An RNA of 177 nucleotides, treated with DMS and 2A3 and read out base by base. Conditions: 150 mM KOAc, 10 mM MgCl2 and 150 mM bicine (pH 8.5), 24 C. For DMS, 3,066 sequencing reads were counted. For 2A3, 4,388 sequencing reads were counted.

RNA sequence: GGGAACGACUCGAGUAGAGUCGAAAAGAUAUGGAAUCCGCUAUGACAUGCCACCGGUCGGAAACGACCGAAGUGGCAACAGCAUACGGAUUCCUAAGUCAAAGUCCCAAGGUUCGCCUUGGGACAACGAAGCAAACAAGUUCGCUUGUUUGCUUCGAAAAGAAACAACAACAACAAC
Reactivity to DMS in 0.01 (KOAc 150mM, MgCl2 10mM, bicine 150mM(pH8.5), 24C), signal-to-noise 3, nucleotides 027 to 126: g010a030u000a080u010g000g000a020a010u000c000c000g010c300u010a010u000g010a030c110a080u000g020c000c000a010c010c000g010g000u000c020g020g010a020a030a040c000g000a010c000c000g010a010a060g040u000g020g000c000a000a030c160a120g010c010a010u000a030c020g000g000a010u000u000c000c000u000a000a030g010u000c010a110a140a120g010u000c000c000c000a010a010g010g000u000u010c260g030c000c010u000u000g000g010g020a010c000a010a040
Reactivity to 2A3 in 0.01 (KOAc 150mM, MgCl2 10mM, bicine 150mM(pH8.5), 24C), signal-to-noise 2, nucleotides 027 to 126: g000a020u030a030u070g010g000a000a010u010c000c020g000c120u030a010u010g070a170c150a300u160g000c020c000a000c000c000g000g000u020c000g000g050a030a010a020c030g000a000c000c000g030a190a010g000u000g000g040c010a020a020c030a000g000c000a000u010a010c030g000g000a000u000u000c000c000u000a000a000g000u000c030a120a060a120g020u000c000c000c000a010a000g090g000u080u200c300g150c080c000u000u000g000g000g000a010c000a000a010